Chemical mapping of a 170-nucleotide RNA with 2A3 and DMS. For DMS the reverse transcriptase was MarathonRT.
RNA sequence: GGGAACGACUCGAGUAGAGUCGAAAAUGUAUCCUACAAGUCUAGUACAACGUAUAAACUGACUGUAGGUGACAUCUUCGUACUUACCUCUCACUCUGUGGCUACCUUGACGGCGCCCACAAUUGUGCAAGUGUUCUGUUCGCAGAACACAAAAGAAACAACAACAACAAC
Reactivity to 2A3 in 0.01 (KOAc 150mM, MgCl2 10mM, bicine 150mM(pH8.5), 24C), signal-to-noise 9, nucleotides 027 to 129: u020g000u010a040u050c000c000u000a000c020a140a070g000u000c040u300a010g020u040a060c080a250a030c250g150u170a090u120a200a150a030c010u010g000a000c000u000g000u000a000g000g010u030g020a000c000a000u020c030u040u020c020g050u060a060c020u050u050a050c000c010u010c010u010c010a040c020u040c040u050g020u020g040g000c020u060a070c020c000u020u080g070a040c050g010g020c000g040c030c040c000a040c020a040a160u100u090g050u050g050c060a130a080
Reactivity to DMS in 0.01 (KOAc 150mM, MgCl2 10mM, bicine 150mM(pH8.5), 24C), signal-to-noise 8, nucleotides 027 to 129: u010g010u020a090u000c020c000u010a020c010a020a040g010u010c030u130a000g020u030a100c180a170a100c300g050u020a060u090a110a150a070c040u000g020a020c000u010g010u020a030g040g000u040g000a100c030a060u000c050u050u020c040g000u060a070c010u010u000a100c020c010u030c040u020c000a090c060u040c070u040g000u000g020g030c000u040a070c060c060u030u010g050a000c050g000g000c140g050c180c020c020a070c000a070a110u070u060g030u000g000c150a090a120